Structure probing data (DMS and 2A3) for a 177-nucleotide construct.
The DMS profile rests on 6,231 reads.
2A3 adducts were read by reverse transcription with SuperScript II with manganese.
For 2A3, 9,416 sequencing reads were counted.
Values cover nucleotides 27 to 126.
RNA sequence: GGGAACGACUCGAGUAGAGUCGAAAACUUUUUGCUGCUGAGACUUUACGUGCCACUGAAGAGGCGUCUAAGCAGUCUUAUGCUAUUGCCACCAUCAAAGAAAUUGUUGGUGAGCGCCAACUAUUACGUGUAAUUAUAGGUUCGCCUAUAAUUACACAAAAGAAACAACAACAACAAC
Reactivity to DMS in 0.01 (KOAc 150mM, MgCl2 10mM, bicine 150mM(pH8.5), 24C), signal-to-noise 5, nucleotides 027 to 126: c060u010u010u000u000u010g010c030u000g000c020u000g010a090g010a040c030u000u000u030a110c200g030u000g020c010c020a110c080u010g020a180a130g000a120g010g020c010g020u000c020u000a060a040g010c040a030g010u000c140u000u000a030u010g020c070u010a100u010u000g010c020c010a020c010c010a020u000c030a030a050a170g010a090a090a130u000u000g010u000u000g000g010u000g010a110g020c030g010c100c120a050a070c130u010a100u010u000a090c210
Reactivity to 2A3 in 0.01 (KOAc 150mM, MgCl2 10mM, bicine 150mM(pH8.5), 24C), signal-to-noise 8, nucleotides 027 to 126: c010u090u050u030u170u220g010c010u010g000c000u020g010a000g010a030c010u130u130u140a080c110g060u140g010c020c010a060c040u120g100a140a030g070a100g110g020c020g020u000c010u020a020a030g000c010a010g000u000c000u060u090a120u090g030c030u060a060u140u250g020c010c010a000c010c000a000u020c020a040a050a070g150a130a270a160u060u040g000u010u000g000g020u020g040a080g000c010g020c020c020a090a110c040u110a100u280u160a080c100